[RMDB]
RNA sequence: GGGAACGACUCGAGUAGAGUCGAAAACGAGGUUGGACGUUGUCCUUCCUUCGGAUGCCCAGGUCGGACCGCGAGGAGGUGGAGAUGCCAUGCCGACCCGAAGAGGAAAGAAGGACGCGAGACGCAAUCAGCAUAGAUAGUUCGCUAUCUAUGCUGAAAAAGAAACAACAACAACAAC
Reactivity to 2A3 in 0.01 (KOAc 150mM, MgCl2 10mM, bicine 150mM(pH8.5), 24C), signal-to-noise 2, nucleotides 027 to 126: c020g020a050g040g030u050u040g060g030a090c200g060u170u210g000u060c000c000u000u020c030c000u160u080c030g020g000a060u170g070c010c030c010a010g060g040u070c020g030g010a040c020c020g060c030g050a080g060g040a050g030g060u050g050g010a120g000a060u130g050c000c040a080u160g000c020c010g010a020c000c010c010g040a040a050g040a030g020g090a020a090a030g050a020a070g040g000a020c050g050c030g050a070g030a020c040g030c080a040a120
Reactivity to DMS in 0.01 (KOAc 150mM, MgCl2 10mM, bicine 150mM(pH8.5), 24C), signal-to-noise 4, nucleotides 027 to 126: c050g010a050g000g000u000u000g020g020a060c010g020u000u000g010u000c000c000u010u000c010c010u000u000c050g020g000a150u010g000c050c020c040a130g000g020u010c030g020g000a150c040c130g010c110g010a120g000g000a100g010g010u010g000g000a150g000a130u010g020c020c020a070u010g020c020c020g010a050c040c010c050g010a090a070g010a210g000g000a040a060a070g010a080a030g010g010a070c070g000c050g010a070g000a100c070g010c100a060a110